This 177-nucleotide RNA was probed chemically with DMS and 2A3. The reactions ran in a buffer of 150 mM KOAc, 10 mM MgCl2 and 150 mM bicine (pH 8.5), at 24 C. Values cover nucleotides 27 to 126. For DMS, 1,125 sequencing reads were counted. For DMS the reverse transcriptase was MarathonRT.

RNA sequence: GGGAACGACUCGAGUAGAGUCGAAAAAAGAGGCUGGACGGCCAUGCUGAUCGCCUUGGGGCAUUGGAGCUGAUGUAAAUCUCCUGAAGCACAUGCAGAGACAAUUUGAGCAUCAUCCUUCAAGGACUCAACUGCUAGCAUUCGUGCUAGCAGUUGAAAAAGAAACAACAACAACAAC
Reactivity to DMS in 0.01 (KOAc 150mM, MgCl2 10mM, bicine 150mM(pH8.5), 24C), signal-to-noise 2, nucleotides 027 to 126: a130a070g000a080g020g030c080u000g010g030a050c120g000g000c060c050a100u020g000c000u000g000a120u000c060g010c020c000u020u010g030g010g000g000c140a100u000u010g010g010a070g000c150u000g000a100u000g000u010a080a090a090u000c040u000c050c040u010g010a050a050g040c060a050c160a040u030g000c050a040g000a110g000a070c080a070a060u000u000u000g000a160g000c000a000u000c050a040u000c140c000u000u010c050a010a070g000g010a180c120
Reactivity to 2A3 in 0.01 (KOAc 150mM, MgCl2 10mM, bicine 150mM(pH8.5), 24C), signal-to-noise 1, nucleotides 027 to 126: a000a010g090a010g000g000c070u100g070g060a030c050g040g000c020c040a050u100g000c020u050g000a120u070c020g020c000c000u030u040g040g000g000g000c050a050u060u070g030g000a040g000c070u020g030a010u060g060u150a000a100a190u030c060u010c000c030u110g030a110a010g050c030a070c000a130u130g030c010a020g040a020g040a110c040a070a040u060u060u150g040a070g020c000a040u020c010a040u030c010c010u050u100c020a100a030g000g000a050c010